[RMDB]
RNA sequence: GGGAACGACUCGAGUAGAGUCGAAAACAGACUCGAGCGAAAGCUCGGCGAAAGCCGCGUACAUGUGACGGUCGGCCUGUGUACAGUCGACAGUUACUCUUCGGAGUAACAAUAGAAACAACAACAACAUUUACCUCGGAUUCGUCCGAGGUAAAUGAAAAGAAACAACAACAACAAC
Reactivity to DMS in 0.01 (KOAc 150mM, MgCl2 10mM, bicine 150mM(pH8.5), 24C), signal-to-noise 4, nucleotides 027 to 126: c090a160g000a080c080u010c010g000a040g020c000g000a080a110a130g010c000u000c020g000g050c040g000a130a160a120g020c040c010g050c060g000u010a060c060a090u040g010u030g030a130c070g000g040u050c050g010g000c070c000u020g020u000g010u020a030c170a110g010u000c010g020a150c200a100g000u010u000a000c000u010c020u000u060c180g030g000a000g000u000a000a020c000a040a050u040a090g010a050a100a060c070a040a060c130a020a100c230a050a100
Reactivity to 2A3 in 0.01 (KOAc 150mM, MgCl2 10mM, bicine 150mM(pH8.5), 24C), signal-to-noise 6, nucleotides 027 to 126: c030a010g060a060c020u020c030g010a020g010c000g050a120a010a010g010c000u000c010g000g000c010g070a100a030a000g050c010c000g010c010g020u050a060c040a190u180g130u220g130a040c020g030g070u130c020g020g010c020c020u130g030u060g030u070a080c030a030g010u010c020g040a010c030a020g000u000u000a000c000u000c000u010u080c250g100g000a000g000u010a000a000c010a000a020u160a040g110a050a130a000c040a010a020c020a020a000c010a000a000

This 177-nucleotide RNA was probed chemically with DMS and 2A3. The reactions ran in a buffer of 150 mM KOAc, 10 mM MgCl2 and 150 mM bicine (pH 8.5), at 24 C. 2A3 adducts were read by reverse transcription with SuperScript II with manganese.